[RMDB]
RNA sequence: GGGAACGACUCGAGUAGAGUCGAAAAGCUGCGCAGAAAGCCUAUCAGGAAGCUAUGGACUCUGGUGACACCUCACCACAAGUUCUUAAGGCUUUGCAGAAGGCUGUUAAUAUAGCUAAAAACGCCUGGGGACUUUGCUUCGGCAAAGUCAAAAGAAACAACAACAACAAC
Reactivity to DMS in 0.01 (KOAc 150mM, MgCl2 10mM, bicine 150mM(pH8.5), 24C), signal-to-noise 8, nucleotides 027 to 129: g020c030u030g020c190g000c150a130g020a100a070a020g030c040c000u040a140u030c060a080g000g000a040a030g010c000u000a150u000g000g010a000c000u000c300u000g000g000u010g010a110c290a120c300c300u010c000a030c000c020a000c300a100a050g000u020u030c010u060u010a070a120g000g040c040u060u030u010g010c140a100g020a040a010g000g030c020u020g010u020u020a080a070u110a060u050a040g000c000u010a020a070a090a100a120c200g020c030c030u050g010g010g020
Reactivity to 2A3 in 0.01 (KOAc 150mM, MgCl2 10mM, bicine 150mM(pH8.5), 24C), signal-to-noise 5, nucleotides 027 to 129: g010c010u040g000c070g000c060a030g110a050a060a000g010c010c000u180a250u220c010a050g060g050a010a000g020c020u030a070u190g000g010a010c010u010c030u040g010g020u010g020a040c030a090c110c050u050c020a000c020c010a010c030a040a000g020u020u010c000u020u080a150a050g010g000c000u040u010u050g050c010a070g000a050a010g000g000c000u010g050u020u010a080a030u170a020u040a040g030c020u100a110a000a010a030a020c030g010c010c000u040g020g010g000

Structure probing data (DMS and 2A3) for a 170-nucleotide construct. For DMS the reverse transcriptase was MarathonRT. The reactions ran in a buffer of 150 mM KOAc, 10 mM MgCl2 and 150 mM bicine (pH 8.5), at 24 C. For 2A3 the reverse transcriptase was SuperScript II with manganese.